[RMDB]
RNA sequence: GGGAACGACUCGAGUAGAGUCGAAAAGCAAGAUGCUUCGGCAUCUUGCAGUCGUAGCGCGAUCGACAGAAUUACAGCUAUGUCGAACCAGGAAGAGCGCGCACAUCAUCCCUUUCGAGGGAUGAAAUUGAACGGUGUAUUUCGAUACACCGUUCAAAAAAGAAACAACAACAACAAC
Reactivity to DMS in 0.01 (KOAc 150mM, MgCl2 10mM, bicine 150mM(pH8.5), 24C), signal-to-noise 3, nucleotides 027 to 126: g010c000a030a010g000a000u000g000c000u000u010c190g040g010c000a010u000c000u000u000g010c000a040g020u000c080g030u000a040g030c020g010c020g020a130u000c000g020a020c000a030g010a100a120u010u010a150c260a110g000c100u000a060u000g000u000c000g000a010a150c030c020a090g000g000a090a040g000a210g010c010g010c000g000c030a030c070a180u010c000a010u000c000c000c000u000u000u000c140g000a020g020g000g010a010u000g000a010a060a080
Reactivity to 2A3 in 0.01 (KOAc 150mM, MgCl2 10mM, bicine 150mM(pH8.5), 24C), signal-to-noise 2, nucleotides 027 to 126: g030c000a000a010g000a010u020g000c010u050u050c180g100g000c000a000u000c000u000u000g000c010a010g070u030c080g020u030a020g000c000g000c020g010a040u030c010g000a000c010a000g120a080a010u230u160a220c070a070g000c050u120a050u080g000u000c000g030a050a070c030c010a030g100g040a050a050g050a030g110c000g000c000g000c010a030c010a010u010c010a000u000c000c000c000u010u020u020c180g100a020g000g000g010a000u000g000a020a030a040